[RMDB]
RNA sequence: GGGAACGACUCGAGUAGAGUCGAAAAUGCGCGGCGGACUGAAAUGGGCUGCCGACCACGGCGGUCGAUGCGCCGACCAUCGACAAGGUCUUCUUGGUGUCGGCGGCCCACGCUUGUAGGUCGGACCGAUAAUUUAUUAGUUCGCUAAUAAAUUAUCAAAAGAAACAACAACAACAAC
Reactivity to 2A3 in 0.01 (KOAc 150mM, MgCl2 10mM, bicine 150mM(pH8.5), 24C), signal-to-noise 9, nucleotides 027 to 126: u160g010c030g010c010g030g010c020g030g040a090c080u160g060a060a120a150u090g010g000g000c000u010g000c000c000g000a000c020c040a140c060g020g010c020g000g010u010c000g000a010u020g010c040g000c040c010g010a020c010c000a010u010c000g010a010c030a080a160g210g000u040c020u200u060c040u190u300g190g000u140g010u060c000g000g000c000g000g000c000c000c000a000c000g010c000u030u180g040u060a040g000g040u010c000g000g010a030c010c030
Reactivity to DMS in 0.01 (KOAc 150mM, MgCl2 10mM, bicine 150mM(pH8.5), 24C), signal-to-noise 8, nucleotides 027 to 126: u030g010c050g010c060g010g020c030g000g000a070c110u030g010a060a120a170u020g010g000g000c000u000g010c010c000g000a010c010c050a130c140g000g000c010g000g000u000c010g010a010u000g010c090g010c000c010g000a010c050c010a000u000c000g000a050c020a080a070g020g000u010c020u030u060c160u030u030g010g010u040g020u000c000g000g000c000g000g000c000c010c000a010c040g010c060u000u020g030u010a080g000g010u000c000g000g000a140c130c100
Annotation: The record gives the reactivity of an RNA of 177 nucleotides to 2A3 and DMS. The 2A3 profile rests on 30,111 reads. The RNA was probed in 150 mM KOAc, 10 mM MgCl2 and 150 mM bicine (pH 8.5) at 24 C.